[RMDB]
RNA sequence: GGGAACGACUCGAGUAGAGUCGAAAACGUUCGGUGCUGGUAGCUCAGAGGCCGUCUCCGAAGUCAUGCGAUUCAGCAGGUCUGGCACCACAGCGUGCGUCGGCAUCGGGACGACGAAUCCUGGAUAUCCACUUGAUGUCACUGGUGACAUGCACUGUCUCCAAUCCGUAUUCGUACGGAUUGGAGAAAAAGAAACAACAACAACAAC
Reactivity to 2A3 in 0.01 (KOAc 150mM, MgCl2 10mM, bicine 150mM(pH8.5), 24C), signal-to-noise 3, nucleotides 027 to 156: c040g030u060u030c020g020g030u000g030c040u020g020g030u050a020g020c050u020c120a030g010a070g000g050c000c000g020u040c080u000c010c020g030a050a010g050u060c010a120u140g040c040g160a170u120u140c070a040g000c020a030g040g070u050c030u080g110g000c050a000c050c020a110c040a060g080c080g040u050g000c000g040u040c060g010g000c000a020u030c020g010g000g050a010c030g000a000c010g030a020a060u110c000c000u010g010g070a030u030a070u060c030c020a040c050u070u140g020a010u010g020u010c010a030c160u100g100g020u070g040a010c010a010u030g020c020a020c050u050g040
Reactivity to DMS in 0.01 (KOAc 150mM, MgCl2 10mM, bicine 150mM(pH8.5), 24C), signal-to-noise 1, nucleotides 027 to 156: c080g010u000u000c080g000g070u000g020c030u040g040g030u000a130g000c070u010c060a130g000a110g050g010c000c010g000u000c010u020c000c000g020a050a070g030u000c000a100u000g040c040g000a130u000u000c080a100g010c060a080g000g020u000c020u000g020g020c140a020c030c020a030c110a140g000c130g000u010g040c010g060u000c000g010g000c130a160u010c050g030g000g020a160c030g050a050c020g000a040a100u000c130c000u000g030g000a100u000a020u000c010c050a090c070u000u010g030a050u010g000u000c070a150c050u020g020g020u020g000a100c050a070u000g020c090a070c070u000g010
The data come from the RNA Mapping Database (RMDB), library OK3TST. Structure probing data (2A3 and DMS) for a 207-nucleotide construct. The reactions ran in a buffer of 150 mM KOAc, 10 mM MgCl2 and 150 mM bicine (pH 8.5), at 24 C. For DMS, 2,170 sequencing reads were counted. For 2A3, 1,725 sequencing reads were counted.